[RMDB]
RNA sequence: GGGAACGACUCGAGUAGAGUCGAAAACGGCACUGCUUCGGCAGUGCCGAAAUCUUGGCCAAAUGUAUAGCAUAAAGCAGGCGGAAGUGGAGUUAGAAUAAGAAAGUAACACCUUCGGGUGUUACAAGUCUAGUAUUACCUUCGGGUAAUACUAGACAAAAGAAACAACAACAACAAC
Reactivity to 2A3 in 0.01 (KOAc 150mM, MgCl2 10mM, bicine 150mM(pH8.5), 24C), signal-to-noise 2, nucleotides 027 to 126: c010g040g070c020a000c000u030g040c010u050u080c130g070g060c010a000g000u010g050c000c000g010a010a020a000u000c000u030u050g100g000c020c020a030a100a070u120g080u070a080u130a160g040c070a060u080a180a060a020g000c000a000g040g000c010g040g010a030a020g080u090g020g070a020g030u130u100a080g140a050a030u150a100a090g090a100a100a010g010u000a000a000c000a000c000c000u050u070c270g060g000g010u010g000u000u010a000c000a000a010
Reactivity to DMS in 0.01 (KOAc 150mM, MgCl2 10mM, bicine 150mM(pH8.5), 24C), signal-to-noise 3, nucleotides 027 to 126: c010g030g010c010a010c010u000g000c000u000u000c200g020g000c000a020g010u000g000c010c000g010a010a020a030u010c070u000u000g010g010c030c050a080a130a080u000g020u000a080u000a080g010c040a090u000a050a060a140g000c030a040g010g020c100g000g010a040a060g000u000g020g010a100g010u000u010a040g000a070a070u000a060a110g010a130a100a100g000u000a000a000c000a000c000c010u000u010c190g020g000g020u000g000u000u000a000c010a040a070